This 177-nucleotide RNA was probed chemically with DMS and 2A3. For DMS the reverse transcriptase was MarathonRT. The data come from the RNA Mapping Database (RMDB), library OK2TST. The RNA was probed in 150 mM KOAc, 10 mM MgCl2 and 150 mM bicine (pH 8.5) at 24 C.
[RMDB]
RNA sequence: GGGAACGACUCGAGUAGAGUCGAAAAGGAUCGAGAAGGAACGGGAGGCCCUCAAACUCAGAGAGGCCGAGCUGGAAGAGUGGGAACGGCGUCUUGGAGAGCGGGAAGCGGAACUCGAGAGCAUGUGGUCCAUCAUUACUUUCGAGUAAUGAUGGACAAAAGAAACAACAACAACAAC
Reactivity to DMS in 0.01 (KOAc 150mM, MgCl2 10mM, bicine 150mM(pH8.5), 24C), signal-to-noise 3, nucleotides 027 to 126: g000g000a070u000c070g010a090g010a110a080g000g000a110a070c110g000g030g000a170g010g010c020c000c020u000c050a010a090a110c110u000c140a140g010a050g010a120g020g040c020c020g000a060g000c070u000g010g010a080a040g010a060g020u000g000g000g010a080a080c080g000g000c080g010u010c050u000u000g010g020a090g000a060g000c150g000g000g030a120a060g030c090g000g010a100a060c050u000c040g000a070g000a070g030c130a070u010g020u000g020
Reactivity to 2A3 in 0.01 (KOAc 150mM, MgCl2 10mM, bicine 150mM(pH8.5), 24C), signal-to-noise 2, nucleotides 027 to 126: g060g010a040u080c050g020a000g000a130a030g040g010a070a000c050g000g020g010a040g050g000c040c000c030u020c030a110a120a090c060u100c120a010g020a000g040a070g020g000c020c010g010a010g010c030u020g060g030a090a050g030a070g070u090g000g000g010a070a030c040g020g000c040g030u010c020u050u050g040g020a060g000a010g020c060g000g000g020a050a000g030c030g020g010a020a020c010u010c050g020a030g000a000g040c080a030u100g050u090g180